[RMDB]
RNA sequence: GGGAACGACUCGAGUAGAGUCGAAAACCCGUUCUUCCCUGCGGAGUGCGCUGCGCCGCCCAGCCCUGUCGCCCCCCCGGAGGUGAUCCCUCCCUCCUGCCUCCCCGCCAGCCUGACCUGUGCCUGGCUCGUUCAGAGAGUUCGCUCUCUGAACGAGAAAAGAAACAACAACAACAAC
Reactivity to DMS in 0.01 (KOAc 150mM, MgCl2 10mM, bicine 150mM(pH8.5), 24C), signal-to-noise 1, nucleotides 027 to 126: c000c000c020g000u020u010c030u000u010c010c010c000u030g050c120g000g000a080g050u000g000c060g060c090u030g010c070g040c080c070g000c030c050c000a090g000c040c010c020u040g000u010c020g030c040c030c040c020c000c000c040g050g030a020g020g000u000g000a110u000c050c000c020u000c000c010c030u010c050c030u000g020c030c040u000c050c040c020c080g000c130c050a020g010c050c020u010g020a070c070c000u020g010u030g050c070c000u040g020g030